RNA sequence: GGGAACGACUCGAGUAGAGUCGAAAACGCCGGCGCACUGAUGUCUGGACCGCUGCAUCUGGGUGGCAUCUGUUGGCGCGGUCGCAAUCAGCGUCCGGUCAUCACCGGGACCACUGUCGGGCUGCUGGUCCGUCAUGUAUUUCGAUACAUGACGGACAAAAGAAACAACAACAACAAC
Reactivity to 2A3 in 0.01 (KOAc 150mM, MgCl2 10mM, bicine 150mM(pH8.5), 24C), signal-to-noise 2, nucleotides 027 to 126: c050g050c020c020g000g000c020g000c030a090c120u050g010a040u010g050u120c130u160g090g020a020c000c020g060c080u190g000c010a060u090c070u130g020g040g050u050g010g000c010a050u000c050u100g170u150u160g040g000c040g000c010g050g000u000c010g010c040a030a100u060c010a030g000c000g040u050c010c010g010g000u030c010a040u050c010a020c040c000g000g000g070a030c030c000a060c100u110g060u080c030g040g030g000c010u040g020c010u070g010
Reactivity to DMS in 0.01 (KOAc 150mM, MgCl2 10mM, bicine 150mM(pH8.5), 24C), signal-to-noise 2, nucleotides 027 to 126: c270g010c010c010g010g000c130g020c050a140c080u000g010a010u000g000u030c130u000g030g010a030c020c020g010c010u010g050c050a030u000c060u010g030g020g020u010g000g050c100a060u010c040u000g020u010u020g000g020c010g010c000g010g000u000c000g000c060a200a050u000c060a040g000c050g010u000c010c000g010g010u000c100a060u000c100a100c040c010g030g000g020a060c090c060a050c100u010g030u000c060g010g000g020c030u000g020c080u010g020

This 177-nucleotide RNA was probed chemically with 2A3 and DMS.
The data come from the RNA Mapping Database (RMDB), library OK2TRN.